[RMDB]
RNA sequence: GGGAACGACUCGAGUAGAGUCGAAAAAUUGAUUUGAGACGUCGCCUUGCAGUGUUAACUUGGCUCUCAUGAACCUCUUUGAUCUUCCACAAAGGGUAGGCUACGGGUGAAACCUGUUAGGCUAAAAUUUGAGUUGAAUAUUCGUAUUCAACUCAAAAAAAGAAACAACAACAACAAC
Reactivity to DMS in 0.01 (KOAc 150mM, MgCl2 10mM, bicine 150mM(pH8.5), 24C), signal-to-noise 7, nucleotides 027 to 126: a090u000u000g010a070u000u010u010g010a080g010a090c150g020u000c150g020c010c010u000u010g000c030a040g010u010g010u000u000a150a050c040u000u000g020g000c040u000c140u010c100a120u010g000a090a110c300c010u000c010u000u000u000g000a070u000c090u010u010c060c060a180c020a010a010a020g010g000g010u000a060g000g000c020u000a060c200g000g000g000u000g000a110a070a260c010c000u000g000u000u000a010g010g010c010u010a040a040a070a110
Reactivity to 2A3 in 0.01 (KOAc 150mM, MgCl2 10mM, bicine 150mM(pH8.5), 24C), signal-to-noise 3, nucleotides 027 to 126: a000u070u080g060a020u070u050u110g070a050g010a030c070g060u080c040g000c000c000u000u020g000c000a020g000u010g000u290u050a040a030c010u030u030g060g000c030u020c010u010c080a080u120g030a030a030c010c000u050c000u040u010u000g060a090u040c060u160u010c040c000a030c000a050a040a000g050g000g010u040a050g050g000c030u050a030c080g040g000g010u050g060a160a050a030c000c000u010g020u030u030a010g010g040c000u010a040a050a030a090
Chemical mapping of a 177-nucleotide RNA with DMS and 2A3. For 2A3 the reverse transcriptase was SuperScript II with manganese. The data come from the RNA Mapping Database (RMDB), library M2PK90. For DMS the reverse transcriptase was MarathonRT. The 2A3 profile rests on 3,591 reads. Reactivities are rounded to 0.1 and cut off at 0 and 3.